[RMDB]
Structure probing data (2A3) for a 207-nucleotide construct. The reactions ran in a buffer of 150 mM KOAc, 10 mM MgCl2 and 150 mM bicine (pH 8.5), at 24 C.

RNA sequence: GGGAACGACUCGAGUAGAGUCGAAAAACUAGUUACUACUCAGGAAGUAUUCACUUUGCACCAGAUCUGUACUAGGUGCUUUUAUACCUGCUAUCAAAAUUAAUCCUUGCCACCAACUGAUAAGUGGACAUUAUUUACUUCCUCUCUUAUCAUUGAAUGCAUAUCGUCGUUUCGACGACGAUAUGCAAAAAGAAACAACAACAACAAC
Reactivity to 2A3 in 0.01 (KOAc 150mM, MgCl2 10mM, bicine 150mM(pH8.5), 24C), signal-to-noise 1, nucleotides 027 to 156: a000c060u060a000g010u060u110a020c020u000a020c020u090c090a020g030g080a060a000g000u120a180u250u100c010a060c110u200u110u160g000c020a000c020c000a020g000a250u090c090u250g030u150a080c020u020a170g030g000u000g000c000u000u150u060u020a010u050a030c020c000u040g000c110u170a030u110c060a120a030a190a160u150u190a080a020u040c000c000u080u280g050c260c000a110c020c000a140a000c050u030g000a000u000a020a000g050u000g040g110a020c000a000u150u280a230u000u240u020a000c000u090u050c000c010u060c000u000c000u000u060a000u090c050a090u060u210g050a150a050
For 2A3 the reverse transcriptase was SuperScript II with manganese.
It was measured as part of the RMDB library OK3TST.